[RMDB]
Chemical mapping of a 177-nucleotide RNA with 2A3 and DMS. The RNA was probed in 150 mM KOAc, 10 mM MgCl2 and 150 mM bicine (pH 8.5) at 24 C. Source: RMDB library M2PK50, as collected in RNAgym. For DMS the reverse transcriptase was MarathonRT. 2A3 adducts were read by reverse transcription with SuperScript II with manganese. Values cover nucleotides 27 to 126. The DMS profile rests on 2,333 reads.

RNA sequence: GGGAACGACUCGAGUAGAGUCGAAAAGAACGCCACUUCGGUGGCGUUCGAAGAUCUACCACACGUAGAUCACUAUCGUGUGAGACAUCGAUAGAUGUCUAAUGGUCCGGAAGUUCGCUUCCGGAAAGUUUCCGUUUCAAUUCGUUGAAACGGAAACAAAAGAAACAACAACAACAAC
Reactivity to 2A3 in 0.01 (KOAc 150mM, MgCl2 10mM, bicine 150mM(pH8.5), 24C), signal-to-noise 2, nucleotides 027 to 126: g000a000a010c010g000c010c000a010c010u050u040c220g120g010u000g010g000c030g000u000u000c010g000a010a000g020a040u010c020u050a080c030c040a060c040a000c090g010u000a000g040a130u120c080a040c090u080a100u200c070g010u050g010u050g080a020g000a010c010a000u000c010g060a040u130a290g010a000u050g060u000c010u040a090a120u190g110g030u010c000c010g010g000a000a020g010u000u120c170g020c170u040u000c000c000g010g000a000a000a000
Reactivity to DMS in 0.01 (KOAc 150mM, MgCl2 10mM, bicine 150mM(pH8.5), 24C), signal-to-noise 3, nucleotides 027 to 126: g000a000a010c010g010c000c010a000c000u000u000c200g030g020u000g000g020c000g010u000u000c000g020a120a070g010a100u000c000u010a080c110c030a050c070a040c070g010u000a010g010a090u000c300a080c100u020a020u020c030g000u000g000u010g000a130g020a020c010a000u000c010g010a240u010a080g010a020u000g000u010c000u000a060a060u010g010g010u000c000c000g010g000a020a010g010u000u020c210g020c000u000u000c000c010g000g000a000a000a030